[RMDB]
RNA sequence: GGGAACGACUCGAGUAGAGUCGAAAAGCCGCAUGAUAAAAGGAGUAGGUCUGGGUGAGAUAGAUUUCAACAUCUGCGGCCUCACCGGGGCUAUAGACCUAUCCUUGUUAUCUAAUAUUUUAGCCCCCUAUAUAACUUAAUUCGUUAAGUUAUAUAGAAAAGAAACAACAACAACAAC
Reactivity to DMS in 0.01 (KOAc 150mM, MgCl2 10mM, bicine 150mM(pH8.5), 24C), signal-to-noise 6, nucleotides 027 to 126: g020c040c050g010c040a140u030g010a030u010a040a080a020a010g000g000a050g020u010a010g000g010u000c000u000g010g010g020u000g010a020g000a130u030a020g010a040u010u000u040c250a110a130c190a040u000c010u000g020c010g020g000c060c000u000c000a010c000c010g010g010g010g040c050u010a040u020a020g010a010c000c000u000a010u000c000c000u000u000g000u010u040a020u010c030u000a100a120u030a070u030u000u010u010a040g000c000c000c010c170
Reactivity to 2A3 in 0.01 (KOAc 150mM, MgCl2 10mM, bicine 150mM(pH8.5), 24C), signal-to-noise 4, nucleotides 027 to 126: g020c010c000g010c060a110u170g030a030u120a040a300a010a010g010g010a040g160u040a000g000g010u000c020u040g050g010g000u010g000a000g010a020u100a040g050a040u050u130u150c080a080a030c020a070u000c010u010g000c000g030g000c000c000u000c000a000c010c000g000g000g000g000c000u010a000u050a070g000a000c000c000u000a000u000c000c000u000u030g030u100u030a030u020c000u000a070a080u060a080u070u010u010u020a000g000c000c000c000c000